[RMDB]
RNA sequence: GGGAACGACUCGAGUAGAGUCGAAAAGAUAUGGACGACGCCGUAGUGUUCAACAGCAGGAGUCGGAAACGACUCCUGACAUGAAUUACGCGUCGUCCUAAGUCAAAGCACCCCGUUCGCGGGGUGCGAAAUCGUGUAGGUUCGCCUACACGAUUUCAAAAGAAACAACAACAACAAC
Reactivity to DMS in 0.01 (KOAc 150mM, MgCl2 10mM, bicine 150mM(pH8.5), 24C), signal-to-noise 4, nucleotides 027 to 126: g000a040u000a280u010g000g000a010c010g000a010c000g020c170c140g030u010a010g020u010g020u000u010c150a100a160c170a150g000c010a010g000g000a030g020u000c000g010g010a040a040a150c010g010a020c000u000c000c000u000g000a020c050a100u010g000a080a050u010u000a010c010g000c000g000u000c000g010u000c000c000u000a010a090g020u010c020a110a130a250g000c010a010c000c010c010c000g020u000u010c240g010c040g010g000g010g030u000g010c010
Reactivity to 2A3 in 0.01 (KOAc 150mM, MgCl2 10mM, bicine 150mM(pH8.5), 24C), signal-to-noise 4, nucleotides 027 to 126: g010a020u030a020u060g000g000a010c000g000a000c040g220c300c200g020u020a050g120u060g280u300u300c200a250a140c010a140g030c000a000g010g000a000g010u000c010g000g000a040a020a000c010g000a000c010u000c010c000u000g000a000c000a050u080g080a120a190u200u010a010c010g010c000g000u000c000g000u010c000c000u000a000a000g010u000c000a010a030a070g000c010a000c000c000c040c000g020u020u030c220g030c000g060g000g000g000u000g000c010